Record summary
Chemical mapping of a 177-nucleotide RNA with DMS. The DMS profile rests on 986 reads.
[RMDB]
RNA sequence: GGGAACGACUCGAGUAGAGUCGAAAAGAUAUGGAAUACCAGCAACAGCCAUCGAGUCGGAAACGACUCAUGGACAUGCUGGUUCCUAAGUCAAACGAGACCUAAGGGUUCGCCCUUAGGUCUCGAACUCUGUGGAAUUGUUCGCAAUUCCACAGAGAAAAGAAACAACAACAACAAC
Reactivity to DMS in 0.01 (KOAc 150mM, MgCl2 10mM, bicine 150mM(pH8.5), 24C), signal-to-noise 1, nucleotides 027 to 126: g000a040u000a250u010g020g000a080a070u000a050c000c000a000g010c040a000a040c230a230g000c000c000a010u000c150g020a020g000u000c000g000g000a070a060a190c000g010a010c010u010c010a010u000g010g010a040c120a130u000g030c000u010g000g010u000u000c000c000u000a060a110g000u000c010a040a070a250c000g000a000g000a010c010c000u000a000a020g010g000g000u000u010c200g020c010c010c000u000u000a000g000g010u000c000u000c000g010a020a120
The reactions ran in a buffer of 150 mM KOAc, 10 mM MgCl2 and 150 mM bicine (pH 8.5), at 24 C. Source: RMDB library TTRDEL, as collected in RNAgym.